[RMDB]
RNA sequence: GGGAACGACUCGAGUAGAGUCGAAAACAGCUGAGGCUUUUUAUGUCUAUGAUCUUAUUUAAGCUUCAUAACAACUUGUAGCAAUGACUGCCAUUUUACUGAUGGAGAAAUGGAGACACAUAGGUUAAAUAACUUGCAUCAGCUCAAAACAGCUGGAUAUCAGGUGCAUAUUCGUAUGCACCUGAUAAAAAGAAACAACAACAACAAC
Reactivity to 2A3 in 0.01 (KOAc 150mM, MgCl2 10mM, bicine 150mM(pH8.5), 24C), signal-to-noise 4, nucleotides 027 to 156: c040a000g010c010u000g010a010g030g040c010u030u000u020u040u050a040u030g020u010c020u010a020u020g020a040u010c010u010u080a130u110u130u060a130a040g020c000u020u010c020a030u070a120a030c120a050a040c040u060u080g030u090a020g010c040a120a190u150g110a200c020u080g080c010c010a030u040u040u020u090a140c120u150g060a060u030g020g020a020g050a040a050a030u080g060g010a020g000a010c050a000c000a120u010a010g020g030u050u030a070a140a050u050a070a010c050u010u030g000c010a020u000c000a010g000c000u020c040a070a180a030a020c030a050g130c000u000g000g060a000
Reactivity to DMS in 0.01 (KOAc 150mM, MgCl2 10mM, bicine 150mM(pH8.5), 24C), signal-to-noise 2, nucleotides 027 to 156: c080a050g020c050u000g000a040g030g020c000u010u020u010u020u000a000u010g010u010c010u000a040u000g020a070u000c080u000u000a050u020u010u000a030a070g020c010u010u000c040a190u010a090a150c040a020a020c040u000u010g030u010a080g060c110a060a200u020g000a190c050u000g000c010c000a050u000u000u000u000a200c060u000g000a060u000g000g000a290g030a010a070a020u010g000g000a090g010a080c050a100c030a040u000a030g020g000u000u000a060a100a080u000a010a040c060u000u000g020c040a080u000c000a020g030c000u000c050a070a050a110a120c030a110g030c060u010g020g020a300

Structure probing data (2A3 and DMS) for a 207-nucleotide construct. For 2A3 the reverse transcriptase was SuperScript II with manganese. Values cover nucleotides 27 to 156. For 2A3, 2,137 sequencing reads were counted.